[RMDB]
RNA sequence: GGGAACGACUCGAGUAGAGUCGAAAAGAUACCCAUGCAGAAGGGAUGAGAUUGAAGGAAGCAGGUAACAUAAAUCGAUCAUUGAGCUGCCUGGGCCAAGUGAUUACAGCACUUGUCGACGUGGGUACUCCCUGAUCUUCUUCGGAAGAUCAGGGAGAAAAGAAACAACAACAACAAC
Reactivity to DMS in 0.01 (KOAc 150mM, MgCl2 10mM, bicine 150mM(pH8.5), 24C), signal-to-noise 1, nucleotides 027 to 126: g000a190u000a150c020c000c030a080u000g020c050a050g010a140a030g000g000g020a050u010g020a150g010a000u000u000g000a040a100g000g010a080a090g000c050a040g000g030u000a050a040c090a030u020a110a030a070u000c130g000a030u000c060a060u000u010g020a170g050c000u010g000c110c130u040g000g000g000c100c050a010a010g010u000g010a060u000u020a140c300a180g000c040a040c030u000u020g000u000c030g000a090c070g040u000g020g010g000u000a170
This 177-nucleotide RNA was probed chemically with DMS. Values cover nucleotides 27 to 126.